[RMDB]
RNA sequence: GGGAACGACUCGAGUAGAGUCGAAAAGUGGCAUACUUCGGUAUGCCACAAACCAGACCCUAUCUGGAACACGCUCUACUGCGUGAUCCCAAGUAGAUCCCAAAAGUCGUGGGUUCGCCCACGACAACAGCGUUAUGUGGUUCGCCACAUAACGCUGAAAAGAAACAACAACAACAAC
Reactivity to DMS in 0.01 (KOAc 150mM, MgCl2 10mM, bicine 150mM(pH8.5), 24C), signal-to-noise 1, nucleotides 027 to 126: g010u010g010g020c000a000u020a010c000u000u060c300g000g000u010a010u000g010c000c000a000c000a000a030a100c070c100a030g000a070c100c180c110u010a110u010c010u000g000g000a150a090c050a020c050g030c020u000c220u000a070c210u000g000c020g040u000g010a050u000c050c000c030a050a050g000u000a090g000a100u000c020c000c040a060a140a100a040g000u000c000g010u000g020g000g000u000u040c170g010c030c000c000a000c000g000a010c000a000a060
Reactivity to 2A3 in 0.01 (KOAc 150mM, MgCl2 10mM, bicine 150mM(pH8.5), 24C), signal-to-noise 1, nucleotides 027 to 126: g010u000g000g000c010a000u010a000c020u030u050c200g110g010u000a000u000g000c010c000a010c010a000a010a000c000c000a000g030a010c000c000c050u040a080u120c010u020g000g010a020a010c010a010c010g020c010u050c050u190a130c080u050g050c010g000u010g080a070u050c010c030c000a020a030g020u020a030g010a070u020c000c000c000a040a070a020a070g000u000c000g000u000g010g000g050u010u040c190g060c000c020c000a000c000g010a000c000a000a000

The record gives the reactivity of an RNA of 177 nucleotides to DMS and 2A3. For DMS the reverse transcriptase was MarathonRT. The DMS profile rests on 683 reads. Source: RMDB library M2PK50, as collected in RNAgym. The RNA was probed in 150 mM KOAc, 10 mM MgCl2 and 150 mM bicine (pH 8.5) at 24 C. For 2A3, 2,244 sequencing reads were counted.